[RMDB]
RNA sequence: GGGAACGACUCGAGUAGAGUCGAAAAACACUAACUCCACUGUUUUCACAUACAGCGAUUCUUGAUUCAAGGAUUUCCAAUAUUCCACUUACGUGAGAUUGCUCAAUAUCAUUUAGCCUAAGAGCUCCAAUACCUCCAUGUUCGCAUGGAGGUAUUGAAAAGAAACAACAACAACAAC
Reactivity to 2A3 in 0.01 (KOAc 150mM, MgCl2 10mM, bicine 150mM(pH8.5), 24C), signal-to-noise 8, nucleotides 027 to 126: a000c040a010c040u070a120a030c020u040c030c010a040c030u020g060u030u040u040u070c080a080c020a050u150a080c040a050g010c030g080a040u070u040c010u050u120g200a280u120u130c040a030a040g030g000a040u020u020u060c020c020a070a050u080a120u160u060c020c010a050c080u130u150a040c100g040u030g040a080g020a080u040u120g010c010u000c040a040a040u040a050u110c070a120u060u120u140a020g010c010c010u070a140a030g030a030g040c010u030c030
Reactivity to DMS in 0.01 (KOAc 150mM, MgCl2 10mM, bicine 150mM(pH8.5), 24C), signal-to-noise 7, nucleotides 027 to 126: a060c060a090c110u010a070a100c050u000c020c030a090c090u000g000u000u000u000u000c090a080c110a080u010a070c120a050g010c060g000a060u000u000c020u000u000g010a110u010u000c070a050a050g000g000a080u000u000u010c080c080a080a070u010a080u010u000c020c020a070c070u000u010a070c180g010u000g000a070g000a070u000u010g000c020u000c040a050a070u000a070u000c080a060u000u010u000a110g010c030c030u010a050a080g010a080g020c060u000c100